Chemical mapping of a 177-nucleotide RNA with DMS and 2A3.
RNA sequence: GGGAACGACUCGAGUAGAGUCGAAAAUCUGGAGAAGCGCUCAACGCUGACGACCUUGCAGCCAUCGACCGUGAGGGCAACGCUACCGUGUCCUCGCUUGCUCGACAGGCGACGGCACUACGGAAGCUAUAUCAUAACCCUUCGGGGUUAUGAUAUAAAAAGAAACAACAACAACAAC
Reactivity to DMS in 0.01 (KOAc 150mM, MgCl2 10mM, bicine 150mM(pH8.5), 24C), signal-to-noise 9, nucleotides 027 to 126: u020c020u010g010g010a120g010a080a070g010c040g020c050u030c090a090a130c060g000c020u000g000a090c070g000a100c060c030u010u010g010c060a080g000c030c040a100u010c060g010a070c080c050g010u010g010a060g000g000g020c080a070a050c120g020c020u010a040c030c020g000u010g000u000c000c010u000c000g010c000u000u000g000c030u040c160g010a140c020a010g000g010c000g000a020c160g000g000c140a030c030u010a030c020g000g010a190a040g000c030
Reactivity to 2A3 in 0.01 (KOAc 150mM, MgCl2 10mM, bicine 150mM(pH8.5), 24C), signal-to-noise 9, nucleotides 027 to 126: u030c020u060g070g020a120g030a130a020g040c030g040c040u040c080a080a060c060g010c050u040g030a050c030g060a070c000c020u040u130g020c040a030g030c020c020a090u090c060g080a070c040c020g040u050g040a080g000g040g000c040a070a050c070g020c040u050a080c020c020g000u010g010u000c000c000u000c010g000c000u010u020g010c030u120c220g160a200c050a030g000g010c010g000a020c060g020g020c080a010c070u170a020c030g030g020a020a000g010c010
Description
The RNA was probed in 150 mM KOAc, 10 mM MgCl2 and 150 mM bicine (pH 8.5) at 24 C. Reactivities are rounded to 0.1 and cut off at 0 and 3.